This 170-nucleotide RNA was probed chemically with DMS and 2A3. Reactivities are given for positions 27 through 129. Conditions: 150 mM KOAc, 10 mM MgCl2 and 150 mM bicine (pH 8.5), 24 C.
RNA sequence: GGGAACGACUCGAGUAGAGUCGAAAACCGAGUGAGGCUUAUCCCGGGGGGAUUGCCUCGGCCCCCUCCCUAACACGGGAGUCUCGGGCCCCCUCCCAGGAAUGGAGACGGGGGGAAAUCGACCGGGUACGGUCCUCGUUCGCGAGGACCAAAAGAAACAACAACAACAAC
Reactivity to DMS in 0.01 (KOAc 150mM, MgCl2 10mM, bicine 150mM(pH8.5), 24C), signal-to-noise 5, nucleotides 027 to 129: c000c000g020a070g020u000g030a020g000g050c010u030u030a090u060c040c020c020g000g020g000g000g030g000a020u010u010g040c020c020u030c000g000g030c020c000c000c000c010u000c000c000c000u010a090a110c150a180c230g020g020g000a030g030u040c050u040c040g010g040g000c010c010c000c000c000u000c030c010c000a040g000g100a150a090u030g000g040a060g000a090c250g020g020g020g020g000g020a030a070a100u040c000g020a080c010c030g030g000g040u040a100c120
Reactivity to 2A3 in 0.01 (KOAc 150mM, MgCl2 10mM, bicine 150mM(pH8.5), 24C), signal-to-noise 9, nucleotides 027 to 129: c000c000g000a020g080u240g010a000g000g020c070u140u130a070u190c000c000c010g010g020g010g000g000g010a040u030u090g020c000c010u010c000g000g000c000c010c000c000c000u020c010c000c000u150a230a090c090a040c130g000g000g000a000g030u000c040u030c030g020g000g000c000c010c000c000c000u040c010c000c010a040g060g140a110a170u080g020g020a160g020a110c080g010g000g000g000g000g020a040a030a070u090c040g040a040c000c000g000g000g010u030a040c060